An RNA of 207 nucleotides, treated with 2A3 and DMS and read out base by base. The reactions ran in a buffer of 150 mM KOAc, 10 mM MgCl2 and 150 mM bicine (pH 8.5), at 24 C. 2A3 adducts were read by reverse transcription with SuperScript II with manganese. 2A3 is a SHAPE reagent: it acylates the 2'-hydroxyl of flexible nucleotides of all four kinds. For DMS the reverse transcriptase was MarathonRT.
RNA sequence: GGGAACGACUCGAGUAGAGUCGAAAAGUCCAACACUAUGUUGAAUAGGAGUGGUGAGAGAGGGCAUCCCUGUCUUGUGUCAGUUUUCAGAGGGAAUGCUUCCAGUUUUUGCCGAUUCAGUAUGAUAUUGGCUGUGGGUUUGUCAUACAUAGCUCUACAGUAAUAGGCUAUUCGUAGCCUAUUACUGAAAAGAAACAACAACAACAAC
Reactivity to 2A3 in 0.01 (KOAc 150mM, MgCl2 10mM, bicine 150mM(pH8.5), 24C), signal-to-noise 4, nucleotides 027 to 156: g040u030c020c000a090a010c050a030c070u120a060u110g040u060u050g100a100a100u070a100g030g030a040g020u060g010g050u050g020a090g000a020g010a040g030g020g000c010a030u030c030c010c000u010g100u050c050u140u180g030u050g060u110c060a160g030u100u050u080u090c020a040g010a040g060g030g000a100a140u020g010c000u110u030c010c010a040g010u040u000u040u140u120g020c010c010g030a000u040u050c020a020g140u110a070u150g040a030u030a060u170u070g040g000c020u020g030u070g030g040g020u030u100u040g000u040c000a000u020a120c010a050u050a040g020c000u010c000u090a040
Reactivity to DMS in 0.01 (KOAc 150mM, MgCl2 10mM, bicine 150mM(pH8.5), 24C), signal-to-noise 3, nucleotides 027 to 156: g010u000c010c020a130a060c050a100c050u000a040u010g010u010u010g000a120a050u000a050g000g010a110g020u000g030g020u000g010a080g010a120g020a090g010g010g030c030a090u010c020c010c000u010g000u000c030u000u010g030u000g020u010c070a140g010u010u000u000u000c030a090g000a300g000g020g000a040a070u000g010c020u000u000c020c030a090g010u000u000u010u000u000g020c010c040g010a070u010u000c050a150g010u000a060u000g010a090u000a070u000u000g000g030c020u000g000u000g000g000g000u000u010u000g010u000c020a110u000a070c060a090u000a110g010c050u000c010u010a270